Structure probing data (2A3) for a 207-nucleotide construct. Values cover nucleotides 27 to 156.
[RMDB]
RNA sequence: GGGAACGACUCGAGUAGAGUCGAAAAGGGGUCAGAGCGGAAUUAGCAAUCAGAGGCUGAAGCCUCCACGGCUACCCACCUGAUUGAACUACUAAUUACGCUCUGACGGAGGCACCCAAAACACUGUAACUCAUGGUUCGCCAUGAGUUACAGUGAACUAUUACUUGGCCUUCGGGCCAAGUAAUAGAAAAGAAACAACAACAACAAC
Reactivity to 2A3 in 0.01 (KOAc 150mM, MgCl2 10mM, bicine 150mM(pH8.5), 24C), signal-to-noise 1, nucleotides 027 to 156: g060g000g050g000u000c000a020g000a000g000c000g010g030a020a040u010u000a010g020c010a000a000u010c020a020g040a030g030g000c120u170g150a070a020g020c030c030u140c200c190a190c150g030g000c020u060a090c020c000c000a080c000c000u000g000a000u010u000g020a030a060c060u110a020c000u020a300a010u010u010a030c000g000c000u000c000u000g000a000c000g000g010a040g030g050c140a070c020c020c050a000a000a000a170c010a000c020u030g020u010a000a000c000u010c010a010u020g000g010u010u060c200g090c060c000a000u000g000a000g000u000u000a000c000a010g000u000g000a000a000
Record summary: For 2A3, 700 sequencing reads were counted. The reactions ran in a buffer of 150 mM KOAc, 10 mM MgCl2 and 150 mM bicine (pH 8.5), at 24 C.